[RMDB]
RNA sequence: GGGAACGACUCGAGUAGAGUCGAAAAGAUAUGGAGUUACUACCCACCUCCUGUAGCACUAUUCGGAAACGAACGAAUGCUACGCGGAGAGGUAACUCCUAAGUCAAAAGCUUCGUUCGCGAAGCAACGAGUCAGAUGAGUUCGCUCAUCUGACUCGAAAAGAAACAACAACAACAAC
Reactivity to DMS in 0.01 (KOAc 150mM, MgCl2 10mM, bicine 150mM(pH8.5), 24C), signal-to-noise 1, nucleotides 027 to 126: g000a070u000a170u000g010g000a000g020u000u000a010c040u000a070c000c000c000a300c140c000u020c040c000u000g020u000a010g060c020a010c090u000a300u000u070c000g010g000a100a090a110c010g030a000a010c110g010a060a080u030g000c000u000a000c010g010c080g000g050a040g000a020g000g020u000a030a000c000u000c000c000u000a020a060g000u000c100a050a050a220a070g000c000u000u000c000g030u000u010c250g060c010g000a020a000g020c000a010a050
Reactivity to 2A3 in 0.01 (KOAc 150mM, MgCl2 10mM, bicine 150mM(pH8.5), 24C), signal-to-noise 2, nucleotides 027 to 126: g200a070u180a220u270g000g030a000g000u020u020a030c010u140a220c000c030c010a010c000c020u020c010c030u000g000u030a000g000c030a000c140u120a090u030u060c000g000g020a090a120a110c030g000a080a030c060g080a300a250u020g040c000u040a000c020g120c170g040g000a020g010a030g020g000u000a010a010c000u060c010c030u000a020a050g150u100c080a030a140a080a100g000c000u050u040c000g110u070u120c270g030c000g000a010a000g000c020a010a010